[RMDB]
RNA sequence: GGGAACGACUCGAGUAGAGUCGAAAAACUCUCGCCGGAAGAGUCUAAACCAGCCAUCACGCGCCUCAAAAGGGCGAAAGGCCAGCUUGAAGCGGUGAUCCGCAUGCUGGAAAACGGCGAAGAAUGCCAUCUCAUUUGAGUUCGCUCAAAUGAGAUGAAAAGAAACAACAACAACAAC
Reactivity to 2A3 in 0.01 (KOAc 150mM, MgCl2 10mM, bicine 150mM(pH8.5), 24C), signal-to-noise 4, nucleotides 027 to 126: a000c000u010c000u000c010g000c010c010g060g070a130a050g050a040g130u080c110u180a080a100a110c000c010a000g030c010c000a010u010c000a000c020g300c010g010c030c000u000c010a000a070a000a000g070g010g010c050g040a140a060a000g250g000c010c010a020g040c030u020u040g030a050a010g000c010g000g020u040g030a050u050c030c030g060c090a080u120g000c010u010g000g000a020a060a010a020c010g000g000c030g000a040a030g040a060a020u110g070c030
Reactivity to DMS in 0.01 (KOAc 150mM, MgCl2 10mM, bicine 150mM(pH8.5), 24C), signal-to-noise 5, nucleotides 027 to 126: a060c050u000c050u010c010g010c020c000g030g010a120a100g000a140g020u010c140u000a060a090a180c020c020a030g010c010c270a050u000c020a020c030g000c010g020c000c020u000c000a010a010a150a250g000g010g010c000g000a040a110a060g020g000c010c010a050g000c190u000u000g030a050a030g010c000g010g010u010g000a040u010c130c110g020c080a070u000g000c010u020g000g000a060a030a060a150c030g010g000c010g010a060a090g010a070a070u010g010c150
An RNA of 177 nucleotides, treated with 2A3 and DMS and read out base by base. For DMS the reverse transcriptase was MarathonRT. The reactions ran in a buffer of 150 mM KOAc, 10 mM MgCl2 and 150 mM bicine (pH 8.5), at 24 C.